[RMDB]
RNA sequence: GGGAACGACUCGAGUAGAGUCGAAAAAUCUUUAGCGCAAAAACUUGAUCUUGAUAUUUCUAAUAUUGAAUUAAUUAAUCCUGCGACAAGUGAAUUGAAAGCUGAAUUAGUUCAAUCAUUUGUUGAAUACUCUUACAUCGUUCGCGAUGUAAGAGUAAAAAGAAACAACAACAACAAC
Reactivity to 2A3 in 0.01 (KOAc 150mM, MgCl2 10mM, bicine 150mM(pH8.5), 24C), signal-to-noise 2, nucleotides 027 to 126: a010u000c050u010u140u080a110g010c010g000c090a040a060a080a100a150c050u040u170g020a080u140c010u030u060g030a040u030a060u160u250u170c090u150a050a110u070a210u090u060g010a000a020u070u000a050a000u000u060a040a110u140c010c030u010g030c000g000a000c010a000a000g020u040g060a120a090u030u010g010a060a040a030g100c090u040g090a070a120u060u040a180g040u000u010c020a000a020u000c010a030u000u040u030g000u000u010g040a030a010